[RMDB]
RNA sequence: GGGAACGACUCGAGUAGAGUCGAAAAACGCCAAAGCGGAAGAACCCGUCAAGGACGUCAAGAAGACCACCAAGUCCUGAUCCUUCCGGGAUGAACUGCCAUGGGCUGAAAACGCGCAUGGCAGGUACGUAAUCACCUGAUUCGUCAGGUGAUUACGAAAAGAAACAACAACAACAAC
Reactivity to 2A3 in 0.01 (KOAc 150mM, MgCl2 10mM, bicine 150mM(pH8.5), 24C), signal-to-noise 4, nucleotides 027 to 126: a010c080g030c030c000a070a080a010g100c030g040g000a060a030g030a120a120c020c020c010g020u030c030a040a080g000g020a050c010g000u070c030a020a090g150a120a020g030a170c020c040a030c060c020a160a020g000u000c000c010u020g000a040u050c000c010u060u000c020c030g040g000g000a050u110g070a070a040c000u000g000c000c000a010u000g000g170g000c010u030g000a060a040a000a010c180g010c010g000c010a010u010g000g000c000a000g000g010u000a010
Reactivity to DMS in 0.01 (KOAc 150mM, MgCl2 10mM, bicine 150mM(pH8.5), 24C), signal-to-noise 7, nucleotides 027 to 126: a080c140g020c050c030a070a120a270g010c020g000g010a050a040g010a100a120c040c020c080g010u000c060a050a080g010g010a020c030g000u000c120a090a120g010a110a100g010a070c070c170a090c130c120a080a170g000u000c010c010u010g000a090u000c070c010u000u000c010c010g000g000g020a120u000g000a070a090c010u000g000c000c000a010u000g010g000g010c010u000g000a110a020a170a140c220g000c000g000c010a010u000g000g010c000a000g000g000u000a030